An RNA of 177 nucleotides, treated with DMS and read out base by base. DMS adducts were read by reverse transcription with MarathonRT. Conditions: 150 mM KOAc, 10 mM MgCl2 and 150 mM bicine (pH 8.5), 24 C. The data come from the RNA Mapping Database (RMDB), library OK2TRN. Values cover nucleotides 27 to 126.

[RMDB]
RNA sequence: GGGAACGACUCGAGUAGAGUCGAAAAGAGCAGGAUGUGUGGCCGGUAAGUCAUCACGACGAAAAAAAUUUCGGUAGAAGACAUAACAAUUGGUGCACGCCAGGUGAAUUCGUCCUACCAUCGGCGAAAUAACGGGGAGGUUCGCCUCCCCGUUAUUAAAAGAAACAACAACAACAAC
Reactivity to DMS in 0.01 (KOAc 150mM, MgCl2 10mM, bicine 150mM(pH8.5), 24C), signal-to-noise 2, nucleotides 027 to 126: g030a150g010c050a000g040g000a020u000g060u020g020u010g040g070c040c020g000g000u000a060a120g000u000c020a130u000c050a090c140g020a100c050g020a020a000a020a110a110a070a250u020u010u000c050g000g010u000a060g000a090a070g010a000c040a060u000a090a030c080a040a110u000u000g000g020u000g020c170a030c060g010c020c050a050g000g000u020g020a080a160u010u000c060g020u000c030c030u000a110c020c020a030u000c080g030g040c030g000a080